An RNA of 177 nucleotides, treated with 2A3 and read out base by base.
The reactions ran in a buffer of 150 mM KOAc, 10 mM MgCl2 and 150 mM bicine (pH 8.5), at 24 C.
RNA sequence: GGGAACGACUCGAGUAGAGUCGAAAAGCAACAAGGACUUUCUCUUCGAAACGACACUGCUAUCCGUUCGAAGCGAUCUUCGGAGGAAUCCUCAAUCACCAGAAUAUGACAUGAAGGUCCCACCAGCACAGAACCCGAUCUUCGGAUCGGGUUCUGUAAAAGAAACAACAACAACAAC
Reactivity to 2A3 in 0.01 (KOAc 150mM, MgCl2 10mM, bicine 150mM(pH8.5), 24C), signal-to-noise 1, nucleotides 027 to 126: g040c030a020a130c000a090a050g070g040a000c060u030u120u000c010u000c000u080u000c030g050a000a140a080c090g010a060c010a020c240u130g060c020u180a070u090c100c090g030u040u260c100g000a010a010g010c000g030a060u000c000u000u000c070g040g000a080g040g000a080a050u070c000c050u000c000a000a060u080c000a050c100c000a060g040a080a040u300a120u260g150a070c140a220u130g070a080a000g010g000u060c000c000c000a040c120c000a040g120c050
For 2A3 the reverse transcriptase was SuperScript II with manganese.